[RMDB]
RNA sequence: GGGAACGACUCGAGUAGAGUCGAAAACGCUCAACCUCAGAGCUAAUGAGGAAAAUGUGCACGAAUACAGUGCACAAGCUGAGGUUCGCCUCAGCAAAAGAAAAGGAUCAGCGAAAAGCUGAUCCAAAUACUGCAUAGGCUUCGGCCUAUGCAGUAUAAAAGAAACAACAACAACAAC
Reactivity to 2A3 in 0.01 (KOAc 150mM, MgCl2 10mM, bicine 150mM(pH8.5), 24C), signal-to-noise 4, nucleotides 027 to 126: c080g000c000u000c020a120a030c020c000u000c000a000g000a030g050c170u240a030a120u070g000a000g000g060a020a080a010a030u110g000u000g000c000a000c000g070a110a020u300a170c110a070g000u000g000c000a000c000a000a020g000c000u000g000a000g000g030u030u040c180g050c010c000u010c000a010g000c000a000a060a030a000g030a010a130a010a010g010g000a000u000c000a000g000c010g110a070a110a220a000g000c000u010g000a000u010c000c000a000a000
Reactivity to DMS in 0.01 (KOAc 150mM, MgCl2 10mM, bicine 150mM(pH8.5), 24C), signal-to-noise 2, nucleotides 027 to 126: c060g000c000u000c000a080a110c000c020u000c000a000g000a010g010c020u140a100a220u000g010a000g000g060a080a040a100a120u040g040u000g000c000a000c000g030a080a150u040a220c190a150g000u020g090c000a010c000a000a030g000c000u010g020a000g000g010u000u020c270g010c000c000u010c000a000g000c000a030a070a140a100g000a120a080a130a000g010g040a010u000c000a000g030c010g000a140a170a090a130g000c020u000g000a000u010c040c000a000a010
The record gives the reactivity of an RNA of 177 nucleotides to 2A3 and DMS. Reactivities are rounded to 0.1 and cut off at 0 and 3. It was measured as part of the RMDB library OK1LIB.